[RMDB]
RNA sequence: GGGAACGACUCGAGUAGAGUCGAAAAGCUGGGUUCCUCGGAUGUCGAUCCCCUCUCCCGUUCGGGAAAAGGGGGACUCCGGAACUCCCUGCAGGUUGGGCACGAAGCCCCCACCGGGCGCUCCCCUACAUCAUUCUGUUCGCAGAAUGAAAAAGAAACAACAACAACAAC
Reactivity to DMS in 0.01 (KOAc 150mM, MgCl2 10mM, bicine 150mM(pH8.5), 24C), signal-to-noise 9, nucleotides 027 to 129: g040c040u010g020g010g020u000u000c020c030u030c040g020g000a030u060g010u000c020g030a140u070c000c010c000c000u020c150u020c000c000c010g030u080u090c200g000g000g000a020a020a100a040g010g010g010g010g010a010c000u000c020c010g000g000a080a060c060u000c010c020c000u000g030c030a050g010g020u020u020g010g000g000c070a090c130g040a130a130g020c030c010c010c030c030a060c080c050g010g000g020c050g010c060u010c000c010c010c020u000a070c150a120
Reactivity to 2A3 in 0.01 (KOAc 150mM, MgCl2 10mM, bicine 150mM(pH8.5), 24C), signal-to-noise 9, nucleotides 027 to 129: g040c070u050g000g010g010u020u010c010c020u020c070g010g000a100u270g030u040c040g080a240u180c010c000c010c000u010c010u010c000c010c010g130u300u300c230g000g000g000a010a050a020a010g010g000g000g000g000a000c000u000c000c000g000g010a010a010c030u060c010c000c020u020g010c000a020g020g020u050u050g020g000g000c050a030c190g180a090a020g030c010c000c000c000c000a020c010c000g040g090g000c030g010c010u020c010c000c000c000u040a060c030a090
The data come from the RNA Mapping Database (RMDB), library 15KLIB. The record gives the reactivity of an RNA of 170 nucleotides to DMS and 2A3. High 2A3 reactivity points to a flexible backbone, as in loops and unpaired stretches. 2A3 adducts were read by reverse transcription with SuperScript II with manganese. The reactions ran in a buffer of 150 mM KOAc, 10 mM MgCl2 and 150 mM bicine (pH 8.5), at 24 C. DMS adducts were read by reverse transcription with MarathonRT.